[RMDB]
RNA sequence: GGGAACGACUCGAGUAGAGUCGAAAAGAAAGUGCUUAAACCGUGUGGACACGAAUGGCUAUAACCACGGAAACCUGAGGAAACAGGAAGCCACAACGUAAGCCAUGUGGUUAGCACACGGAAGAAAGACGGUGCAUUUAUUCGUAAAUGCACCGUCAAAAGAAACAACAACAACAAC
Reactivity to DMS in 0.01 (KOAc 150mM, MgCl2 10mM, bicine 150mM(pH8.5), 24C), signal-to-noise 2, nucleotides 027 to 126: g030a090a100a100g010u000g020c000u000u010a070a040a070c010c000g040u000g040u000g000g010a000c050a010c030g030a230a130u010g010g010c000u000a060u010a030a000c180c110a070c180g000g000a050a070a080c030c000u000g000a220g030g000a150a180a040c000a020g000g010a180a090g000c000c010a030c050a140a060c120g000u000a140a080g000c010c000a000u000g010u000g000g020u000u000a050g020c000a000c040a050c110g000g000a100a090g000a110a100a030
Reactivity to 2A3 in 0.01 (KOAc 150mM, MgCl2 10mM, bicine 150mM(pH8.5), 24C), signal-to-noise 4, nucleotides 027 to 126: g110a030a050a020g020u080g030c040u130u140a070a000a000c000c000g010u000g010u000g030g020a050c010a010c100g140a090a060u070g000g000c020u020a020u090a170a050c060c040a030c170g060g000a080a040a040c000c000u060g010a080g120g300a120a060a020c000a000g000g020a020a030g040c010c000a030c040a150a010c040g060u030a150a000g000c000c000a000u000g020u020g000g040u060u060a020g010c010a010c000a010c030g040g000a040a050g050a060a120a040